[RMDB]
RNA sequence: GGGAACGACUCGAGUAGAGUCGAAAAGAAGCACGGCUUGUGUGUGAUCCUUUUGGAUUGCACUGUAUAUCCUACGCUGUGCGAAUGUAGGACCAUUGUGGCGAGAGCCACUUACAGUACAGCUUAUUAUGACGCAUCGCUGUACGAACGAUGCGGAAGUACCUAGCUCCUUCGGGAGCUAGGUACUAAAAGAAACAACAACAACAAC
Reactivity to DMS in 0.01 (KOAc 150mM, MgCl2 10mM, bicine 150mM(pH8.5), 24C), signal-to-noise 1, nucleotides 027 to 156: g060a070a220g030c000a030c040g060g120c110u010u010g040u000g060u000g010u010g010a010u010c010c020u020u000u000u010g070g000a040u010u000g100c120a010c050u030g030u010a040u000a120u000c040c010u000a010c170g080c010u010g080u000g010c030g050a100a130u000g010u000a060g020g020a090c040c080a060u020u000g040u000g020g050c010g070a300g000a300g010c030c000a020c000u010u000a030c040a070g000u000a050c010a100g000c020u000u010a150u010u010a140u000g010a230c000g000c000a000u000c030g000c000u000g000u010a130c140g030a000a060c000g010a000u020g070c010g000g000a080
Reactivity to 2A3 in 0.01 (KOAc 150mM, MgCl2 10mM, bicine 150mM(pH8.5), 24C), signal-to-noise 2, nucleotides 027 to 156: g060a030a030g020c000a000c090g110g030c050u220u170g020u010g000u030g010u010g130a010u000c000c040u050u180u280u300g000g000a050u000u000g000c120a010c000u010g050u020a120u000a060u210c000c000u030a030c070g000c000u010g070u090g010c030g000a070a000u050g030u000a060g000g130a010c030c000a040u000u070g000u000g000g020c020g000a100g000a040g060c030c000a010c010u000u060a010c010a000g030u030a040c000a010g080c000u000u170a030u200u170a130u290g100a010c000g010c020a000u050c000g000c050u230g080u140a030c000g010a080a010c020g010a000u000g000c010g010g000a000